[RMDB]
RNA sequence: GGGAACGACUCGAGUAGAGUCGAAAAGAUAUGGAGACUGUGGUGAUCGGGUCAUCGAUCUCGGAAACGAGGGAGACCUUCACGUAACAUCAGUCUCCUAAGUCAAACGGGCAGUUCGCUGCCCGAACCUGUAGUGACUCUUCGGAGUCACUACAGGAAAAGAAACAACAACAACAAC
Reactivity to DMS in 0.01 (KOAc 150mM, MgCl2 10mM, bicine 150mM(pH8.5), 24C), signal-to-noise 1, nucleotides 027 to 126: g000a100u000a300u010g000g000a030g010a060c010u000g000u000g030g000u000g000a020u000c250g030g010g000u000c000a250u010c190g000a060u000c000u010c010g010g020a050a090a140c010g000a010g000g000g000a070g010a010c000c000u020u000c000a000c010g010u000a120a100c160a010u000c010a000g000u000c000u000c000c010u010a000a060g010u000c040a060a180a260c030g000g000g010c000a000g030u000u010c120g020c000u000g020c010c000c000g010a000a060
Reactivity to 2A3 in 0.01 (KOAc 150mM, MgCl2 10mM, bicine 150mM(pH8.5), 24C), signal-to-noise 2, nucleotides 027 to 126: g050a020u080a050u170g000g000a000g000a020c010u010g010u040g080g070u000g040a080u300c250g040g000g040u000c020a100u300c080g040a060u020c010u000c030g020g020a120a050a040c010g000a000g040g030g000a010g010a010c010c000u040u050c030a010c020g120u160a110a040c020a180u290c020a020g010u020c000u000c000c000u000a030a010g030u000c020a000a090a090c010g010g000g000c000a020g000u130u140c170g030c110u000g000c000c000c020g010a020a020